RNA sequence: GGGAACGACUCGAGUAGAGUCGAAAAGCAGCCGGUCUGGAGCAAAGCUCAUCGGAACUGACAAUUCUGUCGUCCUCUCGCGGAAAUAUACAUCGUUUCCAUGGCUGCUAGGCUGUACUGCCAACUGCGAGACGCAAGGAUUCGUCCUUGCGUCUCGAAAAGAAACAACAACAACAAC
Reactivity to 2A3 in 0.01 (KOAc 150mM, MgCl2 10mM, bicine 150mM(pH8.5), 24C), signal-to-noise 5, nucleotides 027 to 126: g000c000a010g020c000c040g030g030u020c030u080g060g040a020g020c090a060a130a040g030c030u060c090a060u060c050g010g010a020a040c030u060g030a030c030a020a050u080u050c040u040g190u170c030g050u050c030c080u110c020u050c030g020c020g030g060a010a060a010u230a020u050a090c070a070u070c070g000u030u020u000c010c010a010u050g020g000c000u020g010c000u010a020g010g000c010u030g040u180a150c010u020g030c000c040a070a030c040u080g010
Reactivity to DMS in 0.01 (KOAc 150mM, MgCl2 10mM, bicine 150mM(pH8.5), 24C), signal-to-noise 2, nucleotides 027 to 126: g000c000a010g000c300c080g030g000u000c000u010g040g000a070g000c180a050a040a050g000c000u060c030a070u000c130g000g000a040a050c030u000g000a090c210a140a180u000u000c010u000g000u040c040g040u020c110c040u000c130u040c000g010c000g000g000a040a010a080u000a260u090a120c190a120u040c060g050u010u020u000c000c000a050u000g020g000c000u000g040c000u000a060g010g000c050u000g010u020a050c040u040g000c040c080a060a230c100u030g000